[RMDB]
An RNA of 207 nucleotides, treated with 2A3 and read out base by base. 2A3 adducts were read by reverse transcription with SuperScript II with manganese. It was measured as part of the RMDB library OK3TST. Reactivities are given for positions 27 through 156.

RNA sequence: GGGAACGACUCGAGUAGAGUCGAAAAUGUGGUUCGCGCAGGUCGGCCACGAGUCCGAAGGACUCAAGUGGAUGGUCGAGCUGUGGGGUCCGACGUCGGACCAGCUCACCUAUCAGGGGCGGAUGGGCAACACGCGGCCGGGUGACGGCUACCGGUAUGACAUCGAUAGAUUCGUCUAUCGAUGUCAAAAAGAAACAACAACAACAAC
Reactivity to 2A3 in 0.01 (KOAc 150mM, MgCl2 10mM, bicine 150mM(pH8.5), 24C), signal-to-noise 1, nucleotides 027 to 156: u210g020u050g020g080u140u090c020g000c000g000c160a020g080g110u030c010g000g000c000c000a000c030g040a010g000u000c010c020g160a140a050g030g000a000c000u010c020a100a100g160u070g110g120a270u090g070g020u020c140g010a060g000c030u040g040u110g080g080g000g000u020c020c030g080a090c140g130u290c040g050g000a000c000c000a000g000c000u010c000a020c010c030u060a100u080c130a060g020g040g010g000c040g070g000a110u060g020g000g030c000a010a020c030a000c090g070c010g010g010c000c000g010g000g000u070g040a020c040g010g020c010u010a040c020c010g000g010u090a120